[RMDB]
RNA sequence: GGGAACGACUCGAGUAGAGUCGAAAAAUAAAACUGCGAGGCGCAGCCCUUGGCUUGUUUAACCUUUUGUCACAGCAUCUAUACCAGGGAAUGCUGCAUGUGUGCAGUACCAAGAAAACAUUGCUAUCAUGAAUAACCAAUUCGUUGGUUAUUCAUGAAAAGAAACAACAACAACAAC
Reactivity to DMS in 0.01 (KOAc 150mM, MgCl2 10mM, bicine 150mM(pH8.5), 24C), signal-to-noise 5, nucleotides 027 to 126: a060u010a070a060a090a050c030u010g010c000g020a120g010g020c110g030c030a030g020c100c020c000u000u000g020g010c110u020u000g010u010u000u010a130a120c090c170u000u000u010u020g000u020c110a090c150a050g020c030a020u000c150u010a100u010a180c040c020a010g010g000g010a170a060u030g020c010u000g010c020a060u020g010u010g030u020g000c010a020g000u000a140c030c030a080a120g000a060a050a040a110c190a070u010u000g010c030u000a090u000
Reactivity to 2A3 in 0.01 (KOAc 150mM, MgCl2 10mM, bicine 150mM(pH8.5), 24C), signal-to-noise 9, nucleotides 027 to 126: a000u140a010a060a010a020c000u000g000c020g040a040g080g030c040g000c040a010g010c010c000c000u010u020g050g010c050u050u090g080u120u140u120a080a100c040c010u080u100u140u190g160u110c060a050c010a080g040c000a040u020c040u150a110u090a140c010c010a010g010g010g030a110a110u150g000c010u010g000c010a030u160g060u020g040u060g050c000a000g000u020a050c000c020a040a020g100a060a060a020a020c100a090u110u230g040c020u050a030u070

The record gives the reactivity of an RNA of 177 nucleotides to DMS and 2A3. DMS adducts were read by reverse transcription with MarathonRT. For 2A3 the reverse transcriptase was SuperScript II with manganese. It was measured as part of the RMDB libraries RFM100 and RFMREP.